[RMDB]
This 207-nucleotide RNA was probed chemically with 2A3.
Conditions: 150 mM KOAc, 10 mM MgCl2 and 150 mM bicine (pH 8.5), 24 C.
The data come from the RNA Mapping Database (RMDB), library RNAMAK.
RNA sequence: GGGAACGACUCGAGUAGAGUCGAAAACUUUUGCCUUCGGGCAAAAGAAAAAAGAUAUGGACCCAUGUAGGGAGCAGGAUGUCGGAAACGACAUUCUGCGACGAUCUACAUAAAGAGUGGGUCCUAAGUCAAAAACUCGAUCGUUCGCGAUCGAGAAUCAUCGGUAACGAUUCGUCGUUACCGAUGAAAAAGAAACAACAACAACAAC
Reactivity to 2A3 in 0.01 (KOAc 150mM, MgCl2 10mM, bicine 150mM(pH8.5), 24C), signal-to-noise 1, nucleotides 027 to 156: c010u000u000u000u020g000c000c000u020u060c300g100g030g000c000a000a000a000a010g080a070a060a000a000a000a000g000a000u010a000u030g000g000a000c000c010c030a010u010g000u000a010g040g000g000a010g000c000a000g010g000a000u000g010u020c000g000g000a000a000a000c000g000a000c000a000u000u020c000u000g000c000g000a000c000g000a000u000c000u000a000c000a010u090a030a150a020g230a010g080u300g000g000g000u000c020c000u000a000a000g000u000c000a020a040a040a110a110c030u030c020g000a000u020c000g040u100u040c300g000c000g120a030u040c030g070a010g020a000a030